[RMDB]
RNA sequence: GGGAACGACUCGAGUAGAGUCGAAAAGUCUUCUGCUUCGGCAGAAGACAAAAUAUAAAGGCGGGCGCAUCACCGCUAUGAUGCGAAGUACAAAAGUACAAAAAAGCUUCGAGUUCGCUCGAAGCAAGUUUACAGUAGUGUUCGCACUACUGUAAACAAAAGAAACAACAACAACAAC
Reactivity to DMS in 0.01 (KOAc 150mM, MgCl2 10mM, bicine 150mM(pH8.5), 24C), signal-to-noise 2, nucleotides 027 to 126: g010u010c000u000u000c000u000g020c010u000u000c230g030g030c010a010g010a010a000g020a010c010a020a020a050a080u000a110u020a080a110a170g000g020c050g020g020g030c050g000c000a010u000c010a020c030c020g010c160u020a090u000g010a010u000g000c010g000a190a180g020u000a010c010a090a080a070a170g000u000a010c020a000a060a040a070a050a120g020c000u000u000c000g010a010g000u020u040c230g020c000u000c000g000a010a020g000c000a010a020
Reactivity to 2A3 in 0.01 (KOAc 150mM, MgCl2 10mM, bicine 150mM(pH8.5), 24C), signal-to-noise 3, nucleotides 027 to 126: g000u000c000u000u010c000u000g030c010u020u060c200g120g000c000a000g010a000a000g000a000c000a000a000a000a000u070a000u020a010a080a000g170g020c050g030g010g040c010g000c000a000u000c000a000c010c030g000c210u040a120u030g000a000u000g000c000g050a110a020g010u010a000c010a050a300a070a060g000u000a010c000a010a150a030a030a030a020g020c000u000u000c000g020a000g030u050u120c200g040c070u000c000g010a000a000g000c000a010a000